[RMDB]
RNA sequence: GGGAACGACUCGAGUAGAGUCGAAAAUCUAUAAGUCAGUUAGCAUCUGGCAAGUCCCACUUGAAACUGUGCUGAAUGGAGAAAAUCCCUGUCAUUCAAUCUUUCUGAAUGCCUAUUACCAGAUGUCAACUCAUACCAUCUUCGGAUGGUAUGAGUUAAAAGAAACAACAACAACAAC
Reactivity to DMS in 0.01 (KOAc 150mM, MgCl2 10mM, bicine 150mM(pH8.5), 24C), signal-to-noise 3, nucleotides 027 to 126: u000c070u000a080u000a130a020g000u000c000a000g000u000u000a150g010c040a030u000c010u000g010g020c030a020a080g000u010c070c050c030a140c040u000u010g000a090a050a050c040u010g010u010g020c030u000g000a140a100u020g000g010a020g000a110a050a100a110u000c030c000c060u000g010u000c010a060u000u000c000a020a130u010c130u000u000u020c150u010g000a030a040u000g000c100c100u010a120u000u030a100c020c020a010g010a040u000g040u000c260
Reactivity to 2A3 in 0.01 (KOAc 150mM, MgCl2 10mM, bicine 150mM(pH8.5), 24C), signal-to-noise 2, nucleotides 027 to 126: u040c010u000a080u010a150a030g050u030c020a000g000u010u040a040g010c010a030u000c010u020g020g000c000a010a010g000u050c050c030c050a020c000u000u020g000a030a020a010c010u020g020u070g090c000u030g080a110a100u110g010g040a060g050a050a210a060a050u010c000c010c040u040g110u070c000a010u030u010c000a000a110u050c090u090u280u040c080u030g020a010a020u020g020c000c010u200a210u120u100a060c000c010a010g010a060u020g050u080c020
About this RNA:
Source: RMDB library OK2TST, as collected in RNAgym. An RNA of 177 nucleotides, treated with DMS and 2A3 and read out base by base. For DMS, 1,936 sequencing reads were counted.